The record gives the reactivity of an RNA of 177 nucleotides to DMS and 2A3. It was measured as part of the RMDB library TTRDES. The reactions ran in a buffer of 150 mM KOAc, 10 mM MgCl2 and 150 mM bicine (pH 8.5), at 24 C. The 2A3 profile rests on 9,750 reads.
[RMDB]
RNA sequence: GGGAACGACUCGAGUAGAGUCGAAAAGAUAUGGAGAUACGGCCAGCAACAGCUUACAUCGGAAACGAUGUAAGACAUGCUGACCGUCAUCUCCUAAGUCAAAGUAGGUUGCUUCGGCAACCUACAAUCACUAAACGAUCUUCGGAUCGUUUAGUGAAAAAGAAACAACAACAACAAC
Reactivity to DMS in 0.01 (KOAc 150mM, MgCl2 10mM, bicine 150mM(pH8.5), 24C), signal-to-noise 4, nucleotides 027 to 126: g000a060u010a300u000g000g020a010g000a030u000a010c010g000g000c000c000a000g000c010a020a100c300a250g000c010u000u000a000c000a010u000c000g000g000a110a130a220c010g010a010u000g010u000a000a000g030a050c090a180u010g010c000u010g010a010c000c000g010u000c190a010u000c000u000c000c010u000a000a090g000u000c030a110a120a160g030u010a000g000g010u000u000g000c000u000u020c260g050g020c000a010a000c010c010u010a000c000a050a110
Reactivity to 2A3 in 0.01 (KOAc 150mM, MgCl2 10mM, bicine 150mM(pH8.5), 24C), signal-to-noise 3, nucleotides 027 to 126: g030a010u100a030u140g010g020a020g000a000u010a010c000g010g000c040c000a000g020c010a020a120c040a220g050c000u000u000a000c000a000u010c010g020g040a030a080a030c020g000a000u000g000u000a000a000g020a010c000a020u090g010c010u000g010a010c000c000g000u000c000a010u000c000u000c000c000u010a100a010g000u030c060a090a070a110g010u010a010g000g010u000u010g000c010u030u080c300g180g000c000a000a000c000c000u000a010c000a000a000